[RMDB]
RNA sequence: GGGAACGACUCGAGUAGAGUCGAAAAAAAAGAUAUGGAGAGUUCUACCCACCGUUACCCACCUUUGAUCUCUUAUCGGAAACGAUAAGAGGGAGGUGAACAACGAGGAACUCUCCUAAGUCAAAAACAAUCCUCAUUACUUCGGUAAUGAGGAUUGAAAAGAAACAACAACAACAAC
Reactivity to DMS in 0.01 (KOAc 150mM, MgCl2 10mM, bicine 150mM(pH8.5), 24C), signal-to-noise 1, nucleotides 027 to 126: a020a120a130a120g000a050u010a150u000g000g000a010g010a040g000u000u000c000u000a170c070c020c030a300c050c000g000u000u020a070c260c150c000a000c020c000u000u000u000g000a090u030c000u000c000u000u000a000u000c000g010g010a030a030a120c000g010a000u000a020a000g000a020g000g000g020a000g000g000u000g000a110a230c130a040a010c010g010a080g020g000a050a000c000u000c010u000c000c010u000a030a040g010u010c030a090a150a120a130a070
The record gives the reactivity of an RNA of 177 nucleotides to DMS. For DMS, 778 sequencing reads were counted. For DMS the reverse transcriptase was MarathonRT.